[RMDB]
RNA sequence: GGGAACGACUCGAGUAGAGUCGAAAAGGCAUCGUUAAAUGAUAUCUUCUGUUACUUUUAGCACUCCUCAUCCUAAUGGUUUGGAGAGCAUGGCAGCCAUGCAAGAUCACAGUGGAUCCGAUAGUGACGCAUAUUCACGGUUCGCCGUGAAUAUGCGAAAAGAAACAACAACAACAAC
Reactivity to 2A3 in 0.01 (KOAc 150mM, MgCl2 10mM, bicine 150mM(pH8.5), 24C), signal-to-noise 1, nucleotides 027 to 126: g050g000c020a020u020c060g070u060u120a120a150a050u250g040a050u050a020u050c000u130u050c000u030g070u070u080a120c030u050u000u000u210a030g010c020a020c020u000c000c000u060c000a080u050c020c010u180a200a150u220g000g020u030u020u090g030g000a040g000a010g030c000a000u010g010g000c140a090g030c010c020a040u040g000c030a020a070g050a100u110c030a000c030a060g050u070g030g030a010u030c040c000g050a040u040a100g190u160g040a020
Reactivity to DMS in 0.01 (KOAc 150mM, MgCl2 10mM, bicine 150mM(pH8.5), 24C), signal-to-noise 1, nucleotides 027 to 126: g000g000c080a030u000c080g000u010u000a040a120a210u000g020a060u040a060u000c020u000u000c060u000g000u000u030a120c070u000u000u010u010a080g000c060a120c060u000c030c020u020c130a060u020c030c060u010a090a170u010g020g010u000u000u050g010g000a060g010a040g010c000a060u000g000g000c050a070g020c030c040a050u000g000c000a060a100g000a040u000c030a020c100a050g000u010g000g000a050u010c030c020g000a080u010a060g000u020g000a140